[RMDB]
RNA sequence: GGGAACGACUCGAGUAGAGUCGAAAAGCUGAUGUGGCGCCCCUUGGUAAAGGGCUUAAAGGGUAUUAGCCUGCCAUGUCCAAUGGCAUGAGAGUGUCCCUUGGUAAAGGACUUAAUAGGCAAUAGCCAUGUCCGCUACUUUCGAGUAGCGGACAUGAAAAGAAACAACAACAACAAC
Reactivity to 2A3 in 0.01 (KOAc 150mM, MgCl2 10mM, bicine 150mM(pH8.5), 24C), signal-to-noise 3, nucleotides 027 to 126: g050c040u040g000a020u070g040u040g010g010c000g010c000c000c000c000u010u010g000g000u010a010a010a010g020g000g000c020u020u060a070a000a000g060g000g010u050a130u180u220a080g010c010c000u020g000c000c000a010u010g000u000c030c000a080a290u140g010g000c020a040u080g070a040g000a020g150u120g040u070c000c000c010u010u030g040g010u150a080a050a060g020g000a020c000u040u130a080a040u100a240g050g000c050a060a120u030a090g050c040
Reactivity to DMS in 0.01 (KOAc 150mM, MgCl2 10mM, bicine 150mM(pH8.5), 24C), signal-to-noise 3, nucleotides 027 to 126: g010c040u030g020a020u010g040u010g010g000c040g010c010c000c000c010u000u000g000g000u010a150a190a090g000g000g000c020u000u010a020a020a030g020g000g000u000a030u020u000a190g030c020c020u010g000c030c000a000u000g000u030c040c160a100a050u000g000g000c020a050u010g000a160g000a120g000u010g020u010c000c010c020u000u020g030g000u050a060a120a090g000g000a030c070u000u000a070a170u020a110g010g000c030a060a080u000a090g000c070